[RMDB]
RNA sequence: GGGAACGACUCGAGUAGAGUCGAAAAGAUGCCGACAAGCUCUAUAUUUUGCAACUUGACUUAGGCGAUAGCCAGCGUCAAAUUGUCUCCUCUAUCGUACCAUAUUAUAAAGAAGAAGAGCUUUUGGAUCUACGUAGCACUUCGGUGCUACGUAGAUAAAAGAAACAACAACAACAAC
Reactivity to DMS in 0.01 (KOAc 150mM, MgCl2 10mM, bicine 150mM(pH8.5), 24C), signal-to-noise 1, nucleotides 027 to 126: g020a120u000g000c030c000g020a100c220a060a050g020c010u000c030u010a070u010a090u020u010u000u000g010c000a030a050c040u000u000g000a020c040u010u000a270g010g000c000g030a200u010a080g020c010c000a090g000c300g020u020c010a010a010a030u010u000g010u000c080u000c020c010u010c060u000a060u020c090g030u000a130c090c080a080u000a080u000u000a110u010a060a080a040g030a040a020g030a160a060g010a010g000c010u000u020u000u000g020g000
Reactivity to 2A3 in 0.01 (KOAc 150mM, MgCl2 10mM, bicine 150mM(pH8.5), 24C), signal-to-noise 1, nucleotides 027 to 126: g020a000u150g010c030c030g030a040c090a040a000g010c000u000c000u000a090u010a070u230u130u180u110g020c060a020a020c030u000u000g020a000c000u030u050a040g000g030c030g020a080u020a080g000c020c000a040g060c000g090u040c000a020a020a020u020u050g060u030c020u050c030c000u010c040u040a080u090c030g010u000a100c030c020a060u060a040u300u250a140u150a100a050a040g040a010a010g080a000a000g100a000g000c070u000u030u040u030g100g030